Conditions: 150 mM KOAc, 10 mM MgCl2 and 150 mM bicine (pH 8.5), 24 C. The record gives the reactivity of an RNA of 177 nucleotides to DMS and 2A3. 2A3 adducts were read by reverse transcription with SuperScript II with manganese.
[RMDB]
RNA sequence: GGGAACGACUCGAGUAGAGUCGAAAACCCGUCGUGUUCGCACGACGGGAACUACCGAGAAUGGAGCUCGGUAUAUAACUCCAACCCUUGGAAACAAGGGAACAAUCGCCACUUUCGAGUGGCGAAACGUUUGCAGUAUAUUCGUAUACUGCAAACGAAAAGAAACAACAACAACAAC
Reactivity to DMS in 0.01 (KOAc 150mM, MgCl2 10mM, bicine 150mM(pH8.5), 24C), signal-to-noise 3, nucleotides 027 to 126: c000c000c000g010u000c000g040u000g010u000u020c140g020c010a010c000g010a010c000g000g010g010a000a060c080u000a300c000c000g000a010g000a160a160u000g000g000a020g020c010u000c000g000g000u000a050u010a040u010a040a050c010u000c000c010a040a300c010c000c000u000u010g000g000a080a120a180c000a010a010g000g000g020a100a020c230a110a120u000c000g020c000c000a010c000u000u000u020c100g010a000g030u010g000g000c010g000a010a040a040
Reactivity to 2A3 in 0.01 (KOAc 150mM, MgCl2 10mM, bicine 150mM(pH8.5), 24C), signal-to-noise 3, nucleotides 027 to 126: c010c010c000g000u000c000g000u010g040u040u070c230g000c120a000c000g010a000c000g000g010g000a010a020c010u040a020c000c000g000a010g030a100a170u100g020g030a030g050c000u000c000g000g010u010a010u000a000u000a020a010c000u010c020c000a120a140c040c000c010u000u010g010g020a050a040a010c010a010a000g000g000g030a000a000c020a010a070u040c010g000c010c000a000c000u050u070u090c200g110a000g010u000g000g000c000g000a000a000a000
DMS adducts were read by reverse transcription with MarathonRT. The DMS profile rests on 2,571 reads.